[RMDB]
Structure probing data (DMS) for a 177-nucleotide construct. The data come from the RNA Mapping Database (RMDB), libraries RFM100 and RFMREP. Reactivities are given for positions 27 through 126.
RNA sequence: GGGAACGACUCGAGUAGAGUCGAAAAAGCAUCACGCAGGUGAUACGUCACCUGCGUGAUGCAUUUUAUUUUAAAACGGUGAGAUUUUGUUUUGUCUGAGAAAAUCUCGCUGUUUUAGACUGAGGAAUAUUAUUCCCUACUUCGGUAGGGAAUAAUAAAAAGAAACAACAACAACAAC
Reactivity to DMS in 0.01 (KOAc 150mM, MgCl2 10mM, bicine 150mM(pH8.5), 24C), signal-to-noise 2, nucleotides 027 to 126: a020g010c030a020u020c000a010c040g100c020a030g080g150u040g030a060u010a090c190g020u000c020a010c030c010u010g050c060g080u000g000a000u000g020c000a000u000u000u000u020a040u030u020u000u000a000a010a010a000c000g000g010u010g010a010g000a000u000u000u000u000g000u010u010u020u030g010u020c200u050g010a100g000a010a020a000a010u000c000u000c000g010c000u000g000u000u010u000u000a000g010a040c200u000g000a110g020g020a110a120